[RMDB]
RNA sequence: GGGAACGACUCGAGUAGAGUCGAAAACUGCUCCGGUUCGCCGGAGCAGAAAUGGAUCCAAUCGAAUCCAAAAUGGAAAUGGAGAUCCAAUAAGGGAUAACAAAACCAGGAUGUUCGCAUCCUGGAACCAUGUAGUAAACUUCGGUUUACUACAUGGAAAAGAAACAACAACAACAAC
Reactivity to DMS in 0.01 (KOAc 150mM, MgCl2 10mM, bicine 150mM(pH8.5), 24C), signal-to-noise 5, nucleotides 027 to 126: c000u010g000c000u010c010c000g000g020u000u010c210g040c010c000g010g010a010g020c000a000g000a020a050a100u000g010g010a020u000c000c040a140a130u010c130g020a120a110u000c010c010a050a070a130a150u030g010g010a030a080a090u000g010g010a110g000a030u000c010c000a040a090u010a100a120g020g000g000a110u010a080a070c110a070a070a120a150c000c000a000g000g010a010u000g000u010u010c200g010c000a000u000c000c000u000g010g000a020a040
Reactivity to 2A3 in 0.01 (KOAc 150mM, MgCl2 10mM, bicine 150mM(pH8.5), 24C), signal-to-noise 7, nucleotides 027 to 126: c000u000g010c010u000c000c010g010g080u050u040c210g010c060c010g000g000a000g020c000a000g000a000a000a000u040g000g010a000u010c010c000a010a090u130c090g120a040a040u000c020c020a130a120a080a300u240g020g020a050a050a030u090g030g020a160g010a080u000c010c010a000a010u120a060a020g130g000g030a070u090a200a070c060a040a080a020a070c010c000a010g000g000a000u010g010u060u080c220g010c100a000u000c000c000u000g000g000a000a000